[RMDB]
RNA sequence: GGGAACGACUCGAGUAGAGUCGAAAAUAUGCAAGUGUGUUCCUCUAUUUGACGCUAAAGGUGGGUGCCCCCAUUGAAACACUUCACAAAUGUUGCUGUUGCAUUUGGUAGUAUUUGUACCUUUAGCCGAGAUAUAGGACUUCGGUCCUAUAUCUCGAAAAGAAACAACAACAACAAC
Reactivity to DMS in 0.01 (KOAc 150mM, MgCl2 10mM, bicine 150mM(pH8.5), 24C), signal-to-noise 1, nucleotides 027 to 126: u000a030u010g000c160a080a090g000u020g020u000g000u000u000c010c020u010c230u030a140u000u000u010g010a090c190g020c000u000a000a000a000g010g010u000g000g020g020u000g000c020c040c090c010c020a070u000u010g000a060a040a050c030a010c020u000u010c020a100c070a040a040a050u000g010u000u000g000c120u000g000u000u000g000c020a020u000u000u000g000g050u000a080g020u000a080u000u000u010g000u000a070c020c020u000u000u000a040g010c020
The record gives the reactivity of an RNA of 177 nucleotides to DMS. Reactivities are given for positions 27 through 126. The RNA was probed in 150 mM KOAc, 10 mM MgCl2 and 150 mM bicine (pH 8.5) at 24 C. For DMS the reverse transcriptase was MarathonRT. The data come from the RNA Mapping Database (RMDB), library RFMREP.